Structure probing data (2A3 and DMS) for a 177-nucleotide construct. For DMS, 622 sequencing reads were counted.
RNA sequence: GGGAACGACUCGAGUAGAGUCGAAAAGGAAAUAAUGCACAUAAUCCAGUCGCAGACGCUAAAAAAAACGCUGCGUCGCGACGGAUGUGGCAACGCACACCGAAGUGCAAACGGUAGCGUAAAAAAACAAGAAAUCUCUGUUCGCAGAGAUUUCUUGAAAAGAAACAACAACAACAAC
Reactivity to 2A3 in 0.01 (KOAc 150mM, MgCl2 10mM, bicine 150mM(pH8.5), 24C), signal-to-noise 1, nucleotides 027 to 126: g080g030a000a060a090u130a090a070u220g040c010a050c000a300u240a260a060u090c000c000a030g010u020c000g000c080a070g030a010c010g000c030u080a050a040a040a020a040a040a040a030c110g070c160u110g010c000g000u000c000g000c010g000a000c030g000g000a030u010g000u000g020g010c000a000a000c030g060c000a010c000a020c020c010g040a050a010g110u120g150c040a080a120a000c040g000g000u000a000g020c020g000u000a000a190a000a020a000a010a000
Reactivity to DMS in 0.01 (KOAc 150mM, MgCl2 10mM, bicine 150mM(pH8.5), 24C), signal-to-noise 1, nucleotides 027 to 126: g020g000a150a070a020u010a090a110u000g030c000a120c020a090u000a170a070u000c020c000a120g050u000c010g040c000a050g040a030c000g050c000u030a010a020a000a110a090a060a090a250c260g000c110u000g010c000g100u000c000g000c020g030a000c010g000g000a030u000g020u000g000g030c000a020a070c070g010c000a090c240a160c010c010g030a020a050g000u010g020c170a020a110a060c000g000g020u000a060g000c000g020u000a000a000a020a030a040a120a020

The RNA was probed in 150 mM KOAc, 10 mM MgCl2 and 150 mM bicine (pH 8.5) at 24 C.